[RMDB]
RNA sequence: GGGAACGACUCGAGUAGAGUCGAAAAACAUUAAGUUUCGACUUAAUGUAAACCCGAUGAAGCGGCACAUACGGAGCAUCAUACAUCUAAGAGUGCAAAUAAAAAGUUGAUCCUUCGGGAUCAACAAGUUUAAUAAGUGCUUCGGCACUUAUUAAACAAAAGAAACAACAACAACAAC
Reactivity to DMS in 0.01 (KOAc 150mM, MgCl2 10mM, bicine 150mM(pH8.5), 24C), signal-to-noise 3, nucleotides 027 to 126: a050c000a000u000u000a000a020g010u000u000u040c200g010a030c010u000u000a000a000u000g000u010a050a060a100c000c000c000g010a070u000g010a060a090g030c120g000g020c010a030c060a090u000a090c160g000g020a060g010c060a030u000c060a100u000a100c070a060u010c050u000a100a090g000a130g010u000g010c100a090a070a090u040a040a070a080a100a110g000u000u000g000a010u000c000c000u000u010c170g040g010g010a000u000c000a000a000c000a030a040
Reactivity to 2A3 in 0.01 (KOAc 150mM, MgCl2 10mM, bicine 150mM(pH8.5), 24C), signal-to-noise 3, nucleotides 027 to 126: a000c010a000u000u020a010a000g010u030u050u160c180g050a020c010u010u000a000a000u010g000u010a070a030a030c010c010c000g010a130u150g030a050a010g090c080g060g000c070a020c000a040u240a060c080g100g030a030g120c000a010u060c020a020u070a170c050a070u050c020u090a100a000g080a020g050u070g020c060a040a080a020u190a040a080a010a010a000g010u000u000g000a010u000c000c010u010u040c290g090g000g000a000u020c000a000a000c000a000a000
An RNA of 177 nucleotides, treated with DMS and 2A3 and read out base by base. 2A3 adducts were read by reverse transcription with SuperScript II with manganese. Reactivities are given for positions 27 through 126. For 2A3, 3,353 sequencing reads were counted.